[RMDB]
RNA sequence: GGGAACGACUCGAGUAGAGUCGAAAACAAAAAUCUACAGGUGGUCAUAUUAGUGUCUUAGAGGUCCGACAUGACCUAACUUUAGCAAGUGCAACAUACAUCUGUGGCAAUCCAUGCACUAUUAAUGCUCUACCUAGACUUUCGAGUCUAGGUAGAGAAAAGAAACAACAACAACAAC
Reactivity to DMS in 0.01 (KOAc 150mM, MgCl2 10mM, bicine 150mM(pH8.5), 24C), signal-to-noise 2, nucleotides 027 to 126: c030a040a100a100a130a110u010c030u000a050c070a040g000g070u000g020g020u000c080a070u020a080u000u000a030g000u000g010u000c060u000u020a130g030a100g010g020u010c030c110g020a100c270a060u000g020a020c020c000u000a030a030c050u020u000u000a040g010c170a060a020g030u000g000c010a090a060c110a090u010a050c080a020u010c070u000g010u000g010g000c210a090a100u000c000c060a070u030g000c070a050c060u010a080u000u000a090a090u000g000
Reactivity to 2A3 in 0.01 (KOAc 150mM, MgCl2 10mM, bicine 150mM(pH8.5), 24C), signal-to-noise 3, nucleotides 027 to 126: c020a010a200a030a020a030u050c020u070a040c010a020g000g030u010g000g040u100c060a000u020a080u210u170a060g040u060g000u060c010u030u060a090g040a030g180g000u030c050c020g080a070c060a130u160g010a000c010c000u020a090a150c020u090u110u060a030g040c100a210a000g030u000g060c040a050a030c000a080u160a050c010a030u010c030u050g010u020g020g040c030a050a060u010c030c050a040u080g000c010a010c040u070a060u160u180a140a060u200g020
Chemical mapping of a 177-nucleotide RNA with DMS and 2A3. For 2A3 the reverse transcriptase was SuperScript II with manganese. Conditions: 150 mM KOAc, 10 mM MgCl2 and 150 mM bicine (pH 8.5), 24 C.